[RMDB]
RNA sequence: GGGAACGACUCGAGUAGAGUCGAAAAAUGUCGCCCAACACGCCGCCGGUGUGCGCGCGGUCGCGGCCAGCCACCGAAUCGGGGUCCUGCACGUGGGCGAUGCAGCCUUGGUGGCCGCCGUGGCUGCGACGACGUCGCUAUUCGUAGCGACGUCGUCAAAAGAAACAACAACAACAAC
Reactivity to DMS in 0.01 (KOAc 150mM, MgCl2 10mM, bicine 150mM(pH8.5), 24C), signal-to-noise 1, nucleotides 027 to 126: a070u060g000u000c050g010c030c010c000a100a070c040a040c000g030c000c000g070c100c060g000g050u050g000u000g000c050g000c020g000c000g000g020u040c010g010c000g000g000c020c170a240g060c010c010a060c030c000g030a130a080u080c220g000g000g010g000u030c300c030u000g000c000a000c140g000u000g000g000g030c000g000a170u000g030c010a020g000c030c020u000u020g020g010u000g010g000c000c300g020c000c090g040u000g000g030c000u010g000c000
Reactivity to 2A3 in 0.01 (KOAc 150mM, MgCl2 10mM, bicine 150mM(pH8.5), 24C), signal-to-noise 3, nucleotides 027 to 126: a000u130g060u120c020g000c010c000c000a020a050c050a010c020g030c010c000g110c010c080g050g050u090g010u080g030c100g040c020g000c010g020g000u010c030g010c000g000g000c000c030a010g020c000c000a030c000c030g080a120a110u220c140g050g000g020g000u110c000c020u000g010c000a030c030g060u140g030g050g040c020g020a020u030g000c010a010g020c000c020u130u300g000g000u000g000g010c000c010g020c000c000g000u000g000g000c000u000g000c000
Description: Chemical mapping of a 177-nucleotide RNA with DMS and 2A3. The reactions ran in a buffer of 150 mM KOAc, 10 mM MgCl2 and 150 mM bicine (pH 8.5), at 24 C. DMS adducts were read by reverse transcription with MarathonRT. The 2A3 profile rests on 2,817 reads.